[RMDB]
RNA sequence: GGGAACGACUCGAGUAGAGUCGAAAACAGUCAAAGUGAAGGCGGGCCAGACCAUCGCCGCAUUCUACCAGAGCACCGUCAUGAUCUUUGGCACGAUGGCUCGCUACAUGCGCAGAGUUAGGGAAAAACUGGUGACGAUAUUCGUAUCGUCACCAGUAAAAGAAACAACAACAACAAC
Reactivity to DMS in 0.01 (KOAc 150mM, MgCl2 10mM, bicine 150mM(pH8.5), 24C), signal-to-noise 2, nucleotides 027 to 126: c080a120g020u000c050a030a060a050g000u000g030a210a040g030g030c000g010g000g000c010c040a080g040a090c130c060a080u010c080g000c060c060g030c090a050u010u000c070u010a100c060c070a120g030a060g010c070a050c050c030g010u010c030a120u000g000a100u000c040u000u010u000g000g000c010a060c120g000a110u000g010g000c020u000c010g000c030u000a080c150a070u010g010c100g030c070a040g010a090g020u000u000a060g020g000g010a100a080a070a080